This 177-nucleotide RNA was probed chemically with DMS and 2A3. Conditions: 150 mM KOAc, 10 mM MgCl2 and 150 mM bicine (pH 8.5), 24 C. The 2A3 profile rests on 4,559 reads. It was measured as part of the RMDB library OK2TRN. For DMS the reverse transcriptase was MarathonRT.

[RMDB]
RNA sequence: GGGAACGACUCGAGUAGAGUCGAAAAGUGUGGGAUAGACGGGACUAGUCUUGGCCGUCGUCUUCCAGGACGAUGCUAAAGGAGUCGUGGUGCAUACCGUGGUUCCAUGGAGGAACGGUACGCCGUGCGAGGCUUAAUCAUUCGUGAUUAAGCCUCGAAAAGAAACAACAACAACAAC
Reactivity to DMS in 0.01 (KOAc 150mM, MgCl2 10mM, bicine 150mM(pH8.5), 24C), signal-to-noise 5, nucleotides 027 to 126: g010u010g020u000g000g000g000a080u000a050g010a040c040g000g000g000a060c050u000a090g000u000c120u010u000g010g020c030c050g000u000c010g000u000c020u000u000c120c150a160g000g010a090c000g000a040u000g010c030u000a020a080a120g020g010a030g020u000c010g000u000g000g010u010g020c050a080u000a020c020c000g010u010g010g010u000u000c010c010a090u000g030g010a220g010g000a070a050c010g000g000u000a010c070g020c010c030g010u010g010
Reactivity to 2A3 in 0.01 (KOAc 150mM, MgCl2 10mM, bicine 150mM(pH8.5), 24C), signal-to-noise 2, nucleotides 027 to 126: g050u040g020u040g010g000g000a030u030a050g040a030c010g000g010g050a040c030u020a030g070u040c010u010u020g030g020c010c010g000u010c000g020u030c000u150u020c040c010a020g000g040a000c020g000a000u000g000c020u060a060a020a020g060g010a000g000u010c000g030u010g010g020u080g030c030a020u030a030c000c000g030u040g030g120u060u010c000c010a030u110g130g060a170g010g030a010a000c010g000g000u000a000c010g000c000c000g010u030g050